[RMDB]
RNA sequence: GGGAACGACUCGAGUAGAGUCGAAAAGAGCAUGUCUUCGGACAUGCUCAAACGAGAAACGGCAAAUAAGCCGAUCCCAGGCGAUCGUACGCCAUACUCCAAAAAGUAUAGUCUUCGGACUAUACAAGAGUUAUAUGAUGUUCGCAUCAUAUAACUCAAAAGAAACAACAACAACAAC
Reactivity to DMS in 0.01 (KOAc 150mM, MgCl2 10mM, bicine 150mM(pH8.5), 24C), signal-to-noise 3, nucleotides 027 to 126: g000a010g010c010a000u000g010u000c010u000u000c220g020g000a000c000a000u000g040c000u000c000a000a050a060c160g000a120g010a070a110a150c010g020g030c000a070a150a120u010a120a110g020c020c000g020a090u000c020c000c000a260g000g020c020g000a080u000c170g000u020a130c020g010c010c010a100u000a080c080u000c100c170a030a040a080a080a160g000u000a000u000a010g010u000c000u000u000c220g020g010a000c000u000a000u000a000c000a040a070
Reactivity to 2A3 in 0.01 (KOAc 150mM, MgCl2 10mM, bicine 150mM(pH8.5), 24C), signal-to-noise 6, nucleotides 027 to 126: g010a000g000c010a010u010g000u000c010u060u090c270g040g000a000c000a000u000g000c000u000c000a000a020a000c050g020a010g080a050a150a020c020g000g000c030a050a070a300u210a280a050g000c000c000g010a020u020c000c010c000a010g010g000c030g020a070u140c100g080u100a070c020g020c010c010a040u100a070c060u070c060c040a080a090a030a020a000g000u000a010u000a010g000u000c010u020u050c260g100g000a010c000u000a000u000a010c000a000a020
Chemical mapping of a 177-nucleotide RNA with DMS and 2A3. 2A3 adducts were read by reverse transcription with SuperScript II with manganese. For 2A3, 10,908 sequencing reads were counted. DMS adducts were read by reverse transcription with MarathonRT.